[RMDB]
This 177-nucleotide RNA was probed chemically with 2A3 and DMS. The reactions ran in a buffer of 150 mM KOAc, 10 mM MgCl2 and 150 mM bicine (pH 8.5), at 24 C. For DMS the reverse transcriptase was MarathonRT. The data come from the RNA Mapping Database (RMDB), library OK2TRN. The DMS profile rests on 1,509 reads. The 2A3 profile rests on 1,001 reads.
RNA sequence: GGGAACGACUCGAGUAGAGUCGAAAAGAUUAUCCACUUUUUCAUCCUAACUGAUUUCUCCCCAUAAGUCACCUAAUAUCUGAUUAGGUGGGGAAGAACCAUUCGUGCAUGAAUGAGAAUUUGAUGAGUAAGAUCGCAAAUUCGUUUGCGAUCUUACAAAAGAAACAACAACAACAAC
Reactivity to 2A3 in 0.01 (KOAc 150mM, MgCl2 10mM, bicine 150mM(pH8.5), 24C), signal-to-noise 1, nucleotides 027 to 126: g040a030u130u160a030u190c030c050a090c060u010u000u000u020u050c020a010u020c000c030u040a050a080c080u040g070a140u040u010u000c000u010c000c010c000c000a000u040a190a030g030u120c010a010c030c000u000a000a020u040a030u150c130u070g110a070u000u000a020g090g000u010g000g000g000g000a070a020g010a000a010c030c000a030u010u070c000g020u060g180c070a040u140g020a050a010u050g000a020g090a070a120u090u180u140g080a090u030g010a010
Reactivity to DMS in 0.01 (KOAc 150mM, MgCl2 10mM, bicine 150mM(pH8.5), 24C), signal-to-noise 2, nucleotides 027 to 126: g010a190u020u000a070u010c070c090a110c010u000u000u000u000u000c030a060u000c010c020u000a110a080c130u010g000a090u000u010u000c030u010c000c030c000c010a090u010a060a140g010u010c060a070c010c030u010a050a050u010a130u010c250u010g000a040u000u010a020g000g040u000g000g020g010g000a020a030g000a010a030c210c040a020u000u000c120g010u020g020c180a090u000g010a030a020u000g020a060g010a050a050u010u000u000g010a110u010g010a250